[RMDB]
RNA sequence: GGGAACGACUCGAGUAGAGUCGAAAAGCGGGUGUCCCUGGCUCUGGUAAGUCCAGGUCGAUUCAACAGGGGGAUGUAGAUGUGAUAGUUGUGCCAACCCGUGAGCUGCGUAACUCCUGGCGUCGCCCUUGCCACUCUGGUUCGCCAGAGUGGCAAGAAAAGAAACAACAACAACAAC
Reactivity to DMS in 0.01 (KOAc 150mM, MgCl2 10mM, bicine 150mM(pH8.5), 24C), signal-to-noise 1, nucleotides 027 to 126: g000c100g000g000g020u000g010u000c040c000c000u000g000g000c010u000c080u010g010g020u030a090a170g010u000c000c020a030g000g000u000c030g000a090u020u010c160a110a100c050a070g000g000g010g000g010a110u010g030u010a080g000a090u020g000u000g000a160u000a080g000u000u020g010u000g010c030c060a100a100c060c010c040g050u000g000a170g000c050u000g000c040g000u000a080a130c090u010c010c020u000g010g000c060g030u000c130g020c030c080

Structure probing data (DMS) for a 177-nucleotide construct.
The reactions ran in a buffer of 150 mM KOAc, 10 mM MgCl2 and 150 mM bicine (pH 8.5), at 24 C.
The DMS profile rests on 886 reads.